The record gives the reactivity of an RNA of 207 nucleotides to DMS and 2A3. The RNA was probed in 150 mM KOAc, 10 mM MgCl2 and 150 mM bicine (pH 8.5) at 24 C. For DMS the reverse transcriptase was MarathonRT. Values cover nucleotides 27 to 156. It was measured as part of the RMDB library OK3TST.
RNA sequence: GGGAACGACUCGAGUAGAGUCGAAAAUUGAAUACUCAUCGAAGCCUGUGCCACUGAAGGAUGGGUGAGUUUUGAUUCGCCAAUAGCCUCGUUUCACAUUCAGUGCGUUUUCGACACACGACCCAAAGUCAGCAUCGCGCGUCAAAGCCGGCCUGGAGAUAACCAUGUGAUUCGUCACAUGGUUAUCAAAAGAAACAACAACAACAAC
Reactivity to DMS in 0.01 (KOAc 150mM, MgCl2 10mM, bicine 150mM(pH8.5), 24C), signal-to-noise 3, nucleotides 027 to 156: u000u010g000a080a090u000a030c020u010c010a080u000c000g030a120a120g010c030c030u030g030u000g030c070c080a100c060u010g000a130a070g020g020a100u010g020g060g040u000g030a060g020u000u000u010u010g000a110u000u010c000g060c020c040a080a150u000a160g010c010c030u000c060g020u000u000u000c060a070c060a160u000u000c030a070g020u020g020c020g020u000u000u000u000c060g020a100c030a070c010a060c030g010a090c020c000c030a080a080a100g020u000c080a110g020c050a060u010c050g030c030g020c020g010u000c030a050a060a090g000c000c030g060g040c070c020u000g020g030a300
Reactivity to 2A3 in 0.01 (KOAc 150mM, MgCl2 10mM, bicine 150mM(pH8.5), 24C), signal-to-noise 3, nucleotides 027 to 156: u050u030g020a020a030u080a120c020u010c030a040u040c060g080a120a030g030c000c030u050g050u090g090c030c050a080c070u090g050a060a020g060g020a030u120g050g000g000u030g010a040g000u030u040u020u070g070a050u020u040c040g030c050c010a040a080u100a050g020c020c010u040c060g050u020u110u100c100a130c060a100u080u060c020a050g020u030g070c020g010u040u020u040u060c050g030a020c010a010c010a000c080g070a090c000c030c000a030a040a020g050u040c010a020g020c010a030u090c040g020c000g000c010g130u070c050a070a030a030g010c020c020g030g030c020c000u030g020g000a030